[RMDB]
RNA sequence: GGGAACGACUCGAGUAGAGUCGAAAAACACGCGCGUGUGGAUCGACUAGGUGUGUAUCUAUCGCGCUAUGAUCCUAGUGACUGAGCUCAUGGUACCAUGACGUACUACUAGACUCUAGCAGCGGUAAUACCGUUGGGUUUUCGAACCCAACGGUAUAAAAGAAACAACAACAACAAC
Reactivity to DMS in 0.01 (KOAc 150mM, MgCl2 10mM, bicine 150mM(pH8.5), 24C), signal-to-noise 5, nucleotides 027 to 126: a050c040a040c110g010c140g000c110g010u010g020u000g010g010a300u000c070g020a060c040u000a120g000g030u000g030u010g020u000a070u000c080u000a040u000c010g010c020g010c020u000a040u020g010a040u000c060c000u000a020g010u000g000a100c110u010g000a210g010c110u000c020a060u000g000g000u020a060c130c030a030u000g010a090c160g010u010a050c060u010a030c020u000a020g010a080c070u000c000u000a020g020c020a120g030c030g030g000u000a070
Reactivity to 2A3 in 0.01 (KOAc 150mM, MgCl2 10mM, bicine 150mM(pH8.5), 24C), signal-to-noise 2, nucleotides 027 to 126: a000c030a010c010g090c020g020c050g050u100g030u070g060g050a060u080c020g060a040c060u070a080g150g010u070g050u040g010u140a060u020c040u000a030u020c000g010c000g000c020u020a070u160g020a010u000c020c020u000a010g030u010g090a090c070u080g070a010g060c020u010c040a020u030g110g000u170a160c110c040a060u090g030a040c100g040u070a020c000u000a010c010u020a050g010a070c010u010c030u040a010g010c090a040g000c010g020g000u020a040
Structure probing data (DMS and 2A3) for a 177-nucleotide construct.
For 2A3 the reverse transcriptase was SuperScript II with manganese.
The reactions ran in a buffer of 150 mM KOAc, 10 mM MgCl2 and 150 mM bicine (pH 8.5), at 24 C.
DMS adducts were read by reverse transcription with MarathonRT.
For 2A3, 3,627 sequencing reads were counted.